[RMDB]
RNA sequence: GGGAACGACUCGAGUAGAGUCGAAAAAACGAAUGUAAUUGAACCAGAUGAAGUUUUAACAAACCCUCUUACCGCAGUAGUUGCUCUCCAAGAAGGUUCACUCUGCACAAUCCAUUUUAAAUUUUUUGGAGAUACAGCAGUAUUUGCUGACGUUCCACCUAUCUGGGUGGUUCGCCACCCAGAUAGGAAAAGAAACAACAACAACAAC
Reactivity to 2A3 in 0.01 (KOAc 150mM, MgCl2 10mM, bicine 150mM(pH8.5), 24C), signal-to-noise 1, nucleotides 027 to 156: a000a000c060g020a060a010u080g000u090a020a050u040u060g020a010a030c050c050a010g000a030u070g080a120a020g010u070u060u130u250a130a030c110a050a030a040c010c050c000u000c010u050u160a060c030c030g050c100a000g010u100a020g000u060u070g000c000u010c000u070c050c000a090a080g090a000a020g000g010u030u020c000a000c000u020c020u010g080c050a020c050a060a100u040c000c060a050u020u050u080u190a150a190a220u070u030u010u150u090u000g020g000a020g030a050u160a060c010a010g000c060a060g050u220a130u060u220u140g000c020u000g030a010c030g040u010u010c000c000a000